[RMDB]
RNA sequence: GGGAACGACUCGAGUAGAGUCGAAAAGAUAUGGAUCUAUCAACGUGUAUUUCAAGGGAUACUCAGGGUGGUCGGAAACGACCACUAUUGGAGUAUUCUUGUAAACCGCUGAACCAGAUCCUAAGUCGUUCUGUAUAAACUUCGGUUUAUACAGAACAAAAGAAACAACAACAACAAC
Reactivity to DMS in 0.01 (KOAc 150mM, MgCl2 10mM, bicine 150mM(pH8.5), 24C), signal-to-noise 4, nucleotides 027 to 126: g020a110u010a290u000g010g010a020u000c000u000a090u000c010a000a010c010g000u020g010u000a110u000u000u000c020a020a020g000g010g010a010u000a000c000u000c000a090g010g000g020u010g010g020u000c000g010g000a110a090a270c010g000a020c000c000a010c000u000a020u000u000g030g020a020g010u000a010u000u000c000u000u000g000u000a030a040a050c020c010g010c020u000g010a020a070c190c210a010g000a010u000c000c000u010a100a160g010u010c120
Reactivity to 2A3 in 0.01 (KOAc 150mM, MgCl2 10mM, bicine 150mM(pH8.5), 24C), signal-to-noise 4, nucleotides 027 to 126: g070a030u150a060u230g020g000a010u000c000u010a060u030c020a010a040c030g110u190g030u300a300u150u080u030c020a030a020g130g030g050a020u000a000c000u000c020a010g100g050g000u010g010g000u000c010g000g030a070a120a040c010g000a000c000c040a000c000u000a030u010u110g080g000a000g000u000a000u000u000c000u010u000g000u020a020a020a020c000c000g000c020u010g000a070a070c190c050a040g000a010u000c000c000u010a110a040g140u100c080